[RMDB]
This 177-nucleotide RNA was probed chemically with DMS and 2A3. For DMS the reverse transcriptase was MarathonRT. 2A3 adducts were read by reverse transcription with SuperScript II with manganese.

RNA sequence: GGGAACGACUCGAGUAGAGUCGAAAAGAUAUGGAUGAAUCAUGGCUUCGAAGAACAUGUCUCGGAAACGAGACAUGGGAGAAGGCCAUGAGUUCAUCCUAAGUCAAAAUCGCACUUCGGUGCGAAACAUCCCGGUAUCGUUCGCGAUACCGGGAUGAAAAGAAACAACAACAACAAC
Reactivity to DMS in 0.01 (KOAc 150mM, MgCl2 10mM, bicine 150mM(pH8.5), 24C), signal-to-noise 1, nucleotides 027 to 126: g000a110u010a300u040g010g000a000u000g010a000a000u010c000a010u000g010g010c000u000u000c010g000a190a250g000a140a200c010a000u000g000u010c000u000c010g010g000a180a090a160c000g010a020g010a000c000a000u000g000g000g000a110g000a060a010g030g020c000c000a000u000g020a030g000u000u000c000a020u010c010c020u000a010a090g010u000c010a120a070a120a160u000c010g120c010a000c000u000u010c200g080g000u000g000c000g000a000a050a180
Reactivity to 2A3 in 0.01 (KOAc 150mM, MgCl2 10mM, bicine 150mM(pH8.5), 24C), signal-to-noise 2, nucleotides 027 to 126: g050a030u060a050u250g020g010a010u010g010a020a010u000c020a000u000g000g020c050u080u040c070g300a300a150g000a080a000c000a000u000g000u010c000u010c010g090g040a110a050a030c030g000a000g030a000c010a000u010g000g020g010a060g020a020a070g300g190c030c040a040u000g010a000g000u000u000c000a000u000c000c000u000a060a020g010u000c000a000a010a000a300u030c000g000c020a020c030u090u150c300g120g010u000g000c000g000a010a010a020